RNA sequence: GGGAACGACUCGAGUAGAGUCGAAAAAGCCUCUACGGAGGCAGUGGGCCAGGGGUGGUGUUGGGACAGCUCCGUUUAAAAAGGCAUCUCCAAGAGCUUCCAUCAAAGGCUGCCUCUUGGUGCAGAAUAUACGAUAACUAUUCGUAGUUAUCGUAUAAAAAGAAACAACAACAACAAC
Reactivity to DMS in 0.01 (KOAc 150mM, MgCl2 10mM, bicine 150mM(pH8.5), 24C), signal-to-noise 9, nucleotides 027 to 126: a090g000c010c000u010c010u000a120c150g040g010a010g000g010c010a030g020u010g010g000g010c070c080a080g000g000g010g020u010g010g010u000g000u000u020g000g000g000a050c140a040g010c020u000c020c070g010u010u010u030a030a070a070a110a080g010g000c130a100u020c080u010c040c040a100a040g000a010g010c010u010u000c010c010a070u030c200a080a090a120g000g010c040u000g000c070c000u000c010u010u000g010g010u000g000c090a060g000a100a100
Reactivity to 2A3 in 0.01 (KOAc 150mM, MgCl2 10mM, bicine 150mM(pH8.5), 24C), signal-to-noise 9, nucleotides 027 to 126: a000g020c020c010u030c020u030a080c240g070g000a000g040g000c010a010g090u100g010g040g020c070c050a050g010g010g000g020u090g010g030u120g110u150u160g030g010g020a030c030a030g000c010u010c020c020g010u050u110u170a120a160a020a020a000g050g010c040a080u050c020u010c050c010a020a010g000a000g000c000u020u000c000c030a120u150c080a120a050a030g070g000c010u010g020c030c000u020c000u000u040g010g010u030g010c010a020g060a140a010
An RNA of 177 nucleotides, treated with DMS and 2A3 and read out base by base. DMS adducts were read by reverse transcription with MarathonRT.